Annotation: This 177-nucleotide RNA was probed chemically with 2A3. Reactivities are given for positions 27 through 126. For 2A3 the reverse transcriptase was SuperScript II with manganese.
[RMDB]
RNA sequence: GGGAACGACUCGAGUAGAGUCGAAAAAUUGCAUGGAAUGCAAUAUGCAUUCGUUUGACCCCAGAAAAAAGGCCAUACGGACAGCCAGGUCAAAUGCCGAUUAUUGUGACUGUAAAGUCUUGUUGUUCCUGAUGGCACAGUUCGCUGUGUCAUCAGGAAAAGAAACAACAACAACAAC
Reactivity to 2A3 in 0.01 (KOAc 150mM, MgCl2 10mM, bicine 150mM(pH8.5), 24C), signal-to-noise 3, nucleotides 027 to 126: a000u090u130g060c020a000u140g220g060a120a010u000g040c110a000a070u160a150u300g010c010a000u060u050c000g070u040u060u160g010a060c040c030c000c060a080g070a000a150a000a000a000a000g000g000c000c000a050u050a150c060g010g030a000c010a010g000c000c020a000g010g000u030c000a000a000a040u040g000c000c000g010a000u030u130a080u070u120g110u120g030a010c030u010g160u300a160a110a060g010u000c000u010u000g050u010u000g000u000u000